[RMDB]
RNA sequence: GGGAACGACUCGAGUAGAGUCGAAAAGAUAUGGAGAUACCCAGGACAUGCUGAUUGUCGGAAACGACAAUACAGCAACAGCCUGGUAUCUCCUAAGUCAAAAGACGAUUUCUUCGGAAAUCGUCAACAUGCAUUGGGACUUCGGUCCCAAUGCAUGAAAAGAAACAACAACAACAAC
Reactivity to DMS in 0.01 (KOAc 150mM, MgCl2 10mM, bicine 150mM(pH8.5), 24C), signal-to-noise 1, nucleotides 027 to 126: g000a000u000a060u010g000g000a020g010a020u010a000c300c030c060a020g000g000a030c060a090u030g020c000u010g000a070u000u000g000u000c000g000g000a040a010a010c000g000a050c000a000a000u000a060c000a000g020c000a020a040c140a190g030c000c000u000g010g010u000a000u010c000u000c000c000u000a010a060g000u010c000a140a080a160a110g030a010c000g000a020u000u000u000c000u000u020c190g000g010a010a010a010u000c000g010u000c010a050a090
Reactivity to 2A3 in 0.01 (KOAc 150mM, MgCl2 10mM, bicine 150mM(pH8.5), 24C), signal-to-noise 1, nucleotides 027 to 126: g020a010u010a010u060g010g000a000g020a000u040a010c090c230c120a030g030g000a060c210a300u230g010c010u000g020a000u000u000g010u000c000g000g030a010a000a000c020g020a000c000a000a030u290a250c000a010g050c000a040a050c090a080g030c000c010u030g010g010u000a000u000c010u000c000c000u000a000a000g000u000c000a010a000a020a200g000a000c000g000a010u010u000u020c060u060u120c300g070g030a010a000a010u000c020g000u010c010a000a000
The record gives the reactivity of an RNA of 177 nucleotides to DMS and 2A3. Conditions: 150 mM KOAc, 10 mM MgCl2 and 150 mM bicine (pH 8.5), 24 C. For DMS the reverse transcriptase was MarathonRT. The 2A3 profile rests on 2,398 reads. High 2A3 reactivity points to a flexible backbone, as in loops and unpaired stretches.